[RMDB]
Background:
This 170-nucleotide RNA was probed chemically with DMS and 2A3. DMS adducts were read by reverse transcription with MarathonRT. The 2A3 profile rests on 4,364 reads. Values are in units of 0.01, from 0 to 300, in steps of 10. For 2A3 the reverse transcriptase was SuperScript II with manganese.
RNA sequence: GGGAACGACUCGAGUAGAGUCGAAAAGAGGAAAGCAAAGAAAGCAACGGGGCUAGCGAGUGGAUGUUCCGCCCCCCGAGGGGGCCGAGUGAGGCUUAUCCCGGGGAUCGGCGUCGCCCCCACAUAGUAACUAAGGCCUUCGGGCCUUAGAAAAGAAACAACAACAACAAC
Reactivity to DMS in 0.01 (KOAc 150mM, MgCl2 10mM, bicine 150mM(pH8.5), 24C), signal-to-noise 5, nucleotides 027 to 129: g010a040g000g000a090a050a070g020c300a080a070a020g010a040a060a050g030c070a080a110c140g020g020g020g020c070u000a070g030c120g010a090g040u030g030g000a000u090g000u010u010c030c020g020c020c040c040c000c010c010g010a140g000g020g040g050g000c000c020g010a100g070u050g010a100g010g050c050u000u000a140u050c000c000c000g000g010g030g020a060u040c050g000g040c070g020u000c070g020c000c000c010c010c090a050c060a100u050a100g010u030a030a130
Reactivity to 2A3 in 0.01 (KOAc 150mM, MgCl2 10mM, bicine 150mM(pH8.5), 24C), signal-to-noise 3, nucleotides 027 to 129: g050a010g000g000a050a010a010g050c090a020a010a080g020a030a060a000g030c030a080a030c060g000g000g020g010c030u050a040g060c050g040a050g020u030g050g060a050u050g050u140u010c020c010g030c010c010c010c000c000c000g010a150g020g010g010g000g030c000c000g000a040g080u170g050a000g000g020c010u030u080a120u200c000c000c010g020g000g000g000a040u050c050g000g010c010g010u020c010g040c000c000c000c000c000a020c000a030u080a060g030u120a090a000